[RMDB]
RNA sequence: GGGAACGACUCGAGUAGAGUCGAAAAAGGUGGACACUGCCUGAGCUUAGGCCCUCAGUGGAGGCCCACUUCCUUCUGGGGCGCUGGGGGACGUGCACCAUGACUAAUACAACCUGGUGUGGGGAUUGAGAUUCACAGGCAUUUUCCGAAAGGGCUGAAAGAAAGAGCAUUUCGAUGCUCUUUCUUUAAAAGAAACAACAACAACAAC
Reactivity to 2A3 in 0.01 (KOAc 150mM, MgCl2 10mM, bicine 150mM(pH8.5), 24C), signal-to-noise 2, nucleotides 027 to 156: a000g080g030u100g010g000a010c000a010c080u070g000c000c000u060g010a030g050c010u030u120a050g060g040c000c000c000u010c000a030g000u080g140g090a070g040g060c000c040c020a080c290u110u100c040c000u230u150c100u140g010g010g020g000c020g010c000u010g000g000g000g000g020a010c000g060u050g000c000a000c000c000a000u070g030a050c070u090a080a140u140a160c060a090a030c030c000u020g040g030u020g000u030g040g010g000g020a070u100u180g020a060g030a060u150u110c030a010c010a080g020g000c020a020u100u080u090u000c000c000g080a060a000a000g050g030g000c080u070g060
Reactivity to DMS in 0.01 (KOAc 150mM, MgCl2 10mM, bicine 150mM(pH8.5), 24C), signal-to-noise 2, nucleotides 027 to 156: a050g020g000u010g010g020a070c060a120c100u000g000c000c010u010g020a090g040c040u000u010a110g010g000c020c010c000u010c010a040g030u000g000g000a160g030g020c010c010c040a020c000u010u000c070c040u000u000c030u000g030g030g010g020c040g020c020u020g000g020g020g040g010a020c040g010u010g050c030a030c010c010a030u010g030a180c030u000a110a150u000a160c080a060a120c030c030u010g020g030u000g060u000g010g000g020g000a120u000u000g010a100g000a170u010u010c040a080c020a090g000g020c050a110u000u000u000u010c020c010g010a090a100a140g010g020g030c050u010g000

Chemical mapping of a 207-nucleotide RNA with 2A3 and DMS. It was measured as part of the RMDB library OK3TST. The RNA was probed in 150 mM KOAc, 10 mM MgCl2 and 150 mM bicine (pH 8.5) at 24 C. For 2A3 the reverse transcriptase was SuperScript II with manganese.